[RMDB]
RNA sequence: GGGAACGACUCGAGUAGAGUCGAAAACGGCUCGCCCAUCCCGAUGGCGUGCGACACGAUCAGGUUGUGCUGAAGCUGCGCGAGUUGAGAACGGUCGAUCUGCACGUUCUCGAACUUGCCGAAGCCGGCUCUAACUUUGGUUCGCCAAAGUUAGAGCAAAAGAAACAACAACAACAAC
Reactivity to DMS in 0.01 (KOAc 150mM, MgCl2 10mM, bicine 150mM(pH8.5), 24C), signal-to-noise 3, nucleotides 027 to 126: c140g000g020c010u000c040g010c020c000c060a100u010c000c020c020g000a100u000g000g020c030g030u000g010c070g000a100c080a090c060g010a100u000c080a070g000g010u000u000g020u000g020c020u000g000a110a090g000c030u000g020c200g020c020g010a010g020u010u010g000a030g000a000a020c010g000g000u010c030g010a130u010c150u000g000c110a070c000g000u000u000c010u000c010g010a010a020c010u000u010g010c040c040g000a100a060g010c050c090g010
Reactivity to 2A3 in 0.01 (KOAc 150mM, MgCl2 10mM, bicine 150mM(pH8.5), 24C), signal-to-noise 2, nucleotides 027 to 126: c030g050g030c010u030c020g000c070c040c020a110u070c030c000c040g040a110u110g050g030c030g020u050g020c050g070a010c030a030c100g080a110u090c050a000g020g040u050u040g020u080g030c040u030g050a110a050g000c050u050g020c040g000c020g020a030g000u010u030g020a010g000a000a010c010g010g060u080c070g060a210u080c100u220g060c110a020c060g000u010u010c000u030c020g040a030a040c010u000u020g020c070c000g040a010a010g050c010c040g050